[RMDB]
Structure probing data (2A3) for a 177-nucleotide construct. The RNA was probed in 150 mM KOAc, 10 mM MgCl2 and 150 mM bicine (pH 8.5) at 24 C.
RNA sequence: GGGAACGACUCGAGUAGAGUCGAAAACAGGUAUUCGUACGUUCCAACGCCGUAUGCAGAUCACCAACGGUGUCGAGGCCAAUCCUCCUUCAGCUACCCUAGUCGAUCUACGUAGUGGAAUAGUAAAAUACUAGUUCGCCUUCGGGCGAACUAGUAUAAAAGAAACAACAACAACAAC
Reactivity to 2A3 in 0.01 (KOAc 150mM, MgCl2 10mM, bicine 150mM(pH8.5), 24C), signal-to-noise 1, nucleotides 027 to 126: c010a080g060g020u050a040u030u060c010g030u050a090c090g050u050u010c030c030a130a030c020g030c010c000g020u090a050u070g010c020a000g080a300u040c010a040c020c060a020a030c050g000g000u030g060u090c000g000a020g110g000c010c010a030a070u030c000c000u000c020c010u080u100c020a000g030c000u000a030c010c000c000u000a030g110u000c060g000a110u000c010u040a110c030g040u040a050g090u090g000g110a100a040u000a060g070u030a160a000a000